RNA sequence: GGGAACGACUCGAGUAGAGUCGAAAAUGCAUUUGCAUUUCUUUGGAAAUGCCCAGAUUAUUAGGAUCAAAGCAAAUGAUGACCUGGUCUGUCCACAUGAGGAGGCCUCCCUGAGAGAGAAUCUACCAAGACAGUCACCAGGGCUUGAGGCCAGAAGCACGUAAGUGAGCUUCGGCUCACUUACGUGAAAAGAAACAACAACAACAAC
Reactivity to DMS in 0.01 (KOAc 150mM, MgCl2 10mM, bicine 150mM(pH8.5), 24C), signal-to-noise 2, nucleotides 027 to 156: u000g010c050a110u000u000u000g010c010a070u000u010u000c000u020u010u030g020g000a020a050a090u000g010c010c060c040a170g020a070u010u000a130u000u010a080g010g020a150u000c030a070a140a170g020c010a040a060a130u020g000a130u000g010a050c010c000u000g010g000u010c010u010g010u000c040c020a130c080a110u000g040a140g000g010a140g000g010c010c000u000c000c010c010u000g050a180g000a140g000a140g000a050a050u000c010u000a300c050c100a020a160g000a040c000a060g020u000c080a100c030c040a040g000g030g000c030u010u000g010a050g010g010c010c010a050g000a130a140g010
Reactivity to 2A3 in 0.01 (KOAc 150mM, MgCl2 10mM, bicine 150mM(pH8.5), 24C), signal-to-noise 3, nucleotides 027 to 156: u100g000c020a030u020u060u210g000c000a000u020u060u070c050u070u140u210g120g060a050a040a030u030g010c030c000c030a030g010a060u100u110a100u160u160a150g000g050a070u070c070a060a040a020g030c000a020a050a130u090g070a100u080g030a060c000c000u020g010g020u000c010u010g000u000c020c040a070c020a240u130g030a090g060g020a040g010g030c030c010u010c050c020c060u240g010a170g000a010g010a000g020a100a040u000c020u060a170c050c000a050a020g000a000c000a000g010u070c020a020c030c000a000g030g000g000c020u040u040g010a040g000g000c020c000a030g030a020a020g020

This 207-nucleotide RNA was probed chemically with DMS and 2A3. Values cover nucleotides 27 to 156. For 2A3, 1,431 sequencing reads were counted.